[RMDB]
RNA sequence: GGGAACGACUCGAGUAGAGUCGAAAACGCUGGGCACAUACUUUUGACGGCGCGACCCCACGCAACAGCCUACUGAAGCGCGCACGGUAGGACAUGCGUGACGCCCGUCAAAAGUUUGUGCCUGUGCUGAAGCGCGCACGGCAACCGAAAGGUGCGAGCUAGGUAUCUUCUUCGGAAGAUACCUAGCAAAAGAAACAACAACAACAAC
Reactivity to 2A3 in 0.01 (KOAc 150mM, MgCl2 10mM, bicine 150mM(pH8.5), 24C), signal-to-noise 2, nucleotides 027 to 156: c060g000c020u030g000g020g000c000a000c000a010u040a000c000u000u010u000u010g000a000c020g010g040c050g000c030g300a300c100c100c060c060a020c010g010c030a110a200c030a100g110c000c010u010a000c010u030g060a180a050g030c030g000c010g000c010a020c010g000g000u000a000g000g060a040c020a080u160g000c000g000u000g030a060c070g020c000c000c000g000u000c000a000a010a000a000g000u000u000u000g000u000g000c000c000u000g000u000g000c000u040g010a110a040g000c000g010c010g000c020a010c020g050g000c050a040a070c020c010g070a120a020a000g030g000u020g010c010g010a050